[RMDB]
RNA sequence: GGGAACGACUCGAGUAGAGUCGAAAAUCUAUAUAUCUCUAAAUUCAGGAAGAGUAAGUGAGACACACGAGAGUGCUGUAAGCCUUUGCAAACAUGUAUAUAAAUUUGGCAUAACUAUUCACAAUAGCAAAGACAUGGAAUCAACCUAAGUGCCCAAGGCCUCAAAAUAUUUCGAUAUUUUGAGGCCAAAAGAAACAACAACAACAAC
Reactivity to 2A3 in 0.01 (KOAc 150mM, MgCl2 10mM, bicine 150mM(pH8.5), 24C), signal-to-noise 1, nucleotides 027 to 156: u050c030u050a100u010a060u070a100u250c000u000c000u010a030a160a140u100u050c080a020g070g090a060a040g050a020g030u050a080a020g000u030g000a010g060a060c010a000c000a060c090g060a050g010a010g150u010g010c020u090g020u120a090a000g000c020c050u020u050u030g030c020a030a030a000c020a070u050g070u090a010u020a010u030a140a280a260u060u100u050g020g000c030a070u050a120a050c030u070a050u110u110c050a010c020a130a180u030a150g020c010a010a010a010g010a070c000a020u080g030g080a030a130u070c000a000a000c000c000u070a030a040g070u030g000c000c000c020a050a040
Description: Structure probing data (2A3) for a 207-nucleotide construct.